[RMDB]
Chemical mapping of a 177-nucleotide RNA with 2A3 and DMS. It was measured as part of the RMDB library M2PK50. Reactivities are given for positions 27 through 126. 2A3 adducts were read by reverse transcription with SuperScript II with manganese. The reactions ran in a buffer of 150 mM KOAc, 10 mM MgCl2 and 150 mM bicine (pH 8.5), at 24 C.
RNA sequence: GGGAACGACUCGAGUAGAGUCGAAAACGACAGAACUUCGGUUCUGUCGAAAUAAAAUCAGCGGUUAAAAAGCUGGCGUAAUAACCGCUGAACGCCAGCUUAAAAGAUUCGUGUUCGCACGAAUCAAGUAUAUAAUUUUCUUCGGAAAAUUAUAUACAAAAGAAACAACAACAACAAC
Reactivity to 2A3 in 0.01 (KOAc 150mM, MgCl2 10mM, bicine 150mM(pH8.5), 24C), signal-to-noise 1, nucleotides 027 to 126: c010g000a000c000a000g010a000a000c000u020u080c140g060g040u000u000c000u000g030u000c000g020a000a000a000u070a000a050a010a080u050c030a010g010c000g030g110u090u180a060a150a120a070a000g000c000u010g030g000c000g000u020a090a140u050a190a040c000c000g000c010u020g050a000a000c010g000c010c000a030g000c000u030u040a060a100a030a000g010a010u000u000c020g020u040g080u050u120c300g000c080a000c000g000a000a010u000c000a000a000
Reactivity to DMS in 0.01 (KOAc 150mM, MgCl2 10mM, bicine 150mM(pH8.5), 24C), signal-to-noise 1, nucleotides 027 to 126: c010g010a020c000a000g000a020a010c000u000u010c240g020g010u000u000c000u020g010u010c000g020a020a010a060u010a060a070a090a030u000c030a010g000c030g020g000u000u010a040a100a090a120a050g030c010u000g010g010c040g040u000a080a080u010a110a130c050c030g000c010u000g010a040a030c020g030c000c010a030g000c050u000u000a080a070a060a130g000a010u000u010c000g000u000g000u000u020c140g020c000a010c000g010a020a010u010c010a020a090